[RMDB]
RNA sequence: GGGAACGACUCGAGUAGAGUCGAAAAUCACCACCAAGGCAUCUUGAAAGUGAAUCGUAUUCCAUGAAUAUGAUAUCUAUCUAGUGUGAUGUAUGGAAUAUAUGACAAAGGUGGAUCUAUUGAUCGGCCUUGGGAGGUAUUUCGAUACCUCCCAAGGAAAAGAAACAACAACAACAAC
Reactivity to 2A3 in 0.01 (KOAc 150mM, MgCl2 10mM, bicine 150mM(pH8.5), 24C), signal-to-noise 5, nucleotides 027 to 126: u090c000a020c020c000a000c020c010a050a010g210g000c020a010u000c040u050u120g090a080a120a050g080u100g060a060a040u030c010g000u000a010u030u000c040c130a150u300g060a020a010u050a030u030g040a030u040a140u050c050u040a060u040c030u070a070g100u090g100u080g270a030u040g030u120a040u040g030g010a110a020u070a010u030a030u160g100a070c100a040a030a010g090g000u090g010g030a010u000c010u110a150u070u300g060a090u030c030g110g010
Reactivity to DMS in 0.01 (KOAc 150mM, MgCl2 10mM, bicine 150mM(pH8.5), 24C), signal-to-noise 3, nucleotides 027 to 126: u040c060a140c000c010a120c080c040a060a130g010g000c030a040u000c010u010u020g010a110a150a050g000u010g020a100a020u010c000g020u000a020u000u000c000c140a130u050g000a040a000u020a010u000g000a040u000a090u020c050u030a070u000c040u030a080g000u040g020u000g000a030u000g000u000a040u010g000g010a130a110u040a020u030a070u040g010a150c110a090a070a040g000g020u000g000g000a050u000c050u050a080u030u040g010a050u030c030g020g000